[RMDB]
RNA sequence: GGGAACGACUCGAGUAGAGUCGAAAAUUCAUCGUGAUGUUAGCAAUCAUAUCACCGAGCGUGCUGUUAGCUUUGUUUAAUAGUGGAUCUUUGGAAGUUGCAAUGAACUUAUGGAUUGAAAGGGAUGACGGUACAAUUUAUUCGUAAAUUGUACCGUAAAAGAAACAACAACAACAAC
Reactivity to DMS in 0.01 (KOAc 150mM, MgCl2 10mM, bicine 150mM(pH8.5), 24C), signal-to-noise 8, nucleotides 027 to 126: u000u000c040a070u010c300g010u000g010a060u010g010u000u000a100g010c080a090a070u000c090a070u000a050u000c070a070c030c070g010a050g010c100g020u010g000c030u000g010u000u000a050g010c040u010u000u000g010u000u000u010a050a050u010a050g020u000g010g010a070u010c030u000u000u000g020g010a050a070g000u000u000g010c080a060a060u000g000a060a040c060u000u000a060u010g010g000a050u000u000g000a040a060a080g000g000g010a100u010g000
Reactivity to 2A3 in 0.01 (KOAc 150mM, MgCl2 10mM, bicine 150mM(pH8.5), 24C), signal-to-noise 6, nucleotides 027 to 126: u020u010c000a020u030c010g040u040g040a080u080g030u090u030a040g050c030a010a060u090c040a050u090a050u180c030a030c040c030g010a000g030c050g040u110g010c010u010g010u070u010a010g000c010u120u140u180g100u060u100u040a060a060u020a030g010u030g050g050a090u010c020u080u100u100g050g020a070a030g020u040u020g040c040a060a090u080g000a020a010c000u070u070a040u090g050g020a030u040u120g080a090a050a040g070g010g030a040u110g040
Chemical mapping of a 177-nucleotide RNA with DMS and 2A3. For 2A3 the reverse transcriptase was SuperScript II with manganese. For DMS the reverse transcriptase was MarathonRT. The 2A3 profile rests on 7,116 reads.